The record gives the reactivity of an RNA of 177 nucleotides to 2A3 and DMS. DMS adducts were read by reverse transcription with MarathonRT. High 2A3 reactivity points to a flexible backbone, as in loops and unpaired stretches. The 2A3 profile rests on 13,180 reads. The DMS profile rests on 21,506 reads. For 2A3 the reverse transcriptase was SuperScript II with manganese.
[RMDB]
RNA sequence: GGGAACGACUCGAGUAGAGUCGAAAAUGAUUACUGACUGCAUUAAGAAGCAGGCAGUACCUGCGAUUCCAAAUACGGUGGAAUUCUUUGAUGAGCGUGUGAAUUUUGUACGCCAGUCGAUGAAACAUAUAAAUGACGUAUUCGUACGUCAUUUAUAAAAAGAAACAACAACAACAAC
Reactivity to 2A3 in 0.01 (KOAc 150mM, MgCl2 10mM, bicine 150mM(pH8.5), 24C), signal-to-noise 7, nucleotides 027 to 126: u070g020a020u110u090a000c010u010g020a010c010u000g000c010a040u130u110a300a100g090a170a030g060c000a000g000g000c000a000g010u010a030c000c010u020g050c040g040a050u030u000c010c000a030a070a080u270a100c130g120g060u050g030g040a030a060u070u010c020u030u040u060g030a050u040g010a010g020c020g010u020g010u030g110a130a220u150u230u160u270g020u030a010c010g000c010c010a040g020u020c020g010a020u050g040a040a110a010c060a010
Reactivity to DMS in 0.01 (KOAc 150mM, MgCl2 10mM, bicine 150mM(pH8.5), 24C), signal-to-noise 9, nucleotides 027 to 126: u010g010a140u010u000a020c010u000g010a030c000u000g010c010a080u000u010a150a160g010a200a130g000c000a000g000g010c000a020g000u000a060c070c020u000g010c130g010a110u000u000c010c010a050a100a130u010a080c240g010g010u000g000g000a060a070u010u000c040u000u000u000g010a030u000g010a300g010c010g010u000g020u000g020a060a200u000u010u010u010g010u000a010c020g020c010c030a230g020u000c010g010a010u000g000a080a060a120c170a110